[RMDB]
RNA sequence: GGGAACGACUCGAGUAGAGUCGAAAAAUCAAGGUCGCCGUCGUGCUGCUCGUGAUCGCGGUCGGCGUCUUCCACGUGACGCCCGUGAACUGGAAGCCGUUCAUGCCGCACGGCUGGAACGGCGUGAUACUACUAAAUUAUUCGUAAUUUAGUAGUAAAAAGAAACAACAACAACAAC
Reactivity to DMS in 0.01 (KOAc 150mM, MgCl2 10mM, bicine 150mM(pH8.5), 24C), signal-to-noise 9, nucleotides 027 to 126: a100u010c060a080a080g010g010u000c020g020c020c010g020u000c030g020u000g010c060u000g010c060u000c140g020u010g010a080u010c090g020c030g000g010u010c100g000g010c010g010u000c010u000u000c030c040a060c190g010u000g000a090c060g010c020c010c030g010u010g000a140a070c070u000g000g000a100a140g010c020c010g010u000u000c020a150u010g010c010c020g010c190a090c170g000g010c010u000g010g010a040a020c010g000g010c000g010u000g000a100
Reactivity to 2A3 in 0.01 (KOAc 150mM, MgCl2 10mM, bicine 150mM(pH8.5), 24C), signal-to-noise 8, nucleotides 027 to 126: a000u080c040a030a030g070g020u050c000g010c020c010g000u020c010g020u040g040c020u040g010c030u050c140g130u140g060a120u110c050g000c010g040g050u100c030g010g000c000g010u000c000u050u020c020c010a060c070g030u040g030a020c050g050c010c030c010g060u070g070a070a050c020u050g040g080a080a020g010c000c000g000u020u030c020a040u110g010c000c010g140c060a140c170g000g000c010u070g110g010a040a000c000g000g000c000g000u010g010a020